[RMDB]
RNA sequence: GGGAACGACUCGAGUAGAGUCGAAAAGUGGUGGUGAGAAACGUUUAAAUGAUGGAAGAAGUGGCCGUCAACCGUUGCUUAGGUGUAAUUUUAAAAUGAAGAGGCAAAACUGUACUUCCUCCGAAUCCUCAUCCAUCGUCGGCAUUUCUUCCCGGACCCUUUUUAAAAGCUUCGGCUUUUAAAAAGGAAAAGAAACAACAACAACAAC
Reactivity to 2A3 in 0.01 (KOAc 150mM, MgCl2 10mM, bicine 150mM(pH8.5), 24C), signal-to-noise 1, nucleotides 027 to 156: g020u020g000g000u010g000g000u010g000a020g040a050a050a000c000g000u040u220u130a140a200a140u120g060a000u090g000g000a150a000g000a000a000g010u020g040g220c000c000g020u000c010a080a090c040c000g040u040u100g020c120u150u120a080g090g000u010g000u030a070a080u060u090u060u130a080a170a080a100u110g000a000a030g010a000g080g010c030a000a030a110a050c110u110g010u070a100c040u020u030c000c000u020c060c000g050a070a040u100c000c010u070c040a030u060c050c000a050u040c050g000u030c000g050g020c000a000u030u030u030c030u010u010c010c060c020g060g060a110c000
This 207-nucleotide RNA was probed chemically with 2A3. Conditions: 150 mM KOAc, 10 mM MgCl2 and 150 mM bicine (pH 8.5), 24 C. For 2A3, 415 sequencing reads were counted. Source: RMDB library OK3TST, as collected in RNAgym.